The record gives the reactivity of an RNA of 177 nucleotides to DMS. For DMS, 787 sequencing reads were counted.
RNA sequence: GGGAACGACUCGAGUAGAGUCGAAAAUAGCUGGGGACACAGUGUCAACCGGGUCCACGGUGAGUGGGGUGUUGUGGUCUGAGGGCCCAUGCCAGUCCCCUACCCAGGUGCUGUGAUCACUCUCAGAGCAAGGAGGAGGGUUCGCCCUCCUCCUUGCAAAAGAAACAACAACAACAAC
Reactivity to DMS in 0.01 (KOAc 150mM, MgCl2 10mM, bicine 150mM(pH8.5), 24C), signal-to-noise 1, nucleotides 027 to 126: u000a180g000c020u010g000g000g020g010a160c000a030c020a020g000u010g050u010c140a130a070c080c070g000g000g010u010c050c020a080c000g000g010u020g000a150g010u000g000g000g020g030u010g000u010u000g010u000g060g020u010c010u020g020a240g070g020g010c090c060c000a060u000g000c030c020a270g000u010c000c030c050c030u010a050c000c020c010a090g030g000u010g020c030u000g000u010g010a140u000c080a030c130u000c010u010c040a090g040a260